[RMDB]
RNA sequence: GGGAACGACUCGAGUAGAGUCGAAAAAAUGGCACUGCAGAGCUGAUGGGCCAUGUACCUAUCCAAAAUGAGAUCCCAUCUUGCACACUGUGCUUAUUUGAGAUUCUCAUGCCUCCUACUUGGAGAGACCGCAUGCCCAGCUUCGGCUGGGCAUGAACGGUAGCAAUCAAUUCGUUGAUUGCUACCGAAAAGAAACAACAACAACAAC
Reactivity to DMS in 0.01 (KOAc 150mM, MgCl2 10mM, bicine 150mM(pH8.5), 24C), signal-to-noise 2, nucleotides 027 to 156: a040a060u010g010g010c020a110c040u000g010c050a140g010a170g030c030u000g020a050u000g020g030g010c030c020a110u010g020u000a100c040c020u010a090u000c100c060a070a080a080a060u010g010a080g000a090u000c010c010c000a030u000c120u000u000g020c020a070c020a220c130u000g010u000g020c000u000u020a060u000u010u000g010a100g000a150u010u000c030u010c010a070u000g030c030c040u000c010c000u000a090c110u010u000g000g000a110g010a110g010a140c050c120g000c000a000u010g010c010c000c000a010g020c030u000u000c300g050g010c000u010g000g000g020c000a000u000g000a010a140
Reactivity to 2A3 in 0.01 (KOAc 150mM, MgCl2 10mM, bicine 150mM(pH8.5), 24C), signal-to-noise 4, nucleotides 027 to 156: a000a000u060g000g010c030a030c060u070g020c100a030g010a030g050c010u040g020a050u020g010g000g020c000c000a020u020g040u070a110c040c010u080a140u150c080c070a050a060a050a090u070g010a090g020a180u080c000c000c000a010u000c000u060u090g000c010a020c020a020c070u060g000u000g000c010u090u070a100u030u020u070g070a090g010a060u080u010c010u000c020a010u130g020c000c000u000c000c010u080a240c100u160u140g030g000a030g020a030g050a070c040c170g000c010a010u000g000c000c000c020a010g000c000u000u020c130g070g010c000u010g000g020g000c000a000u000g000a010a000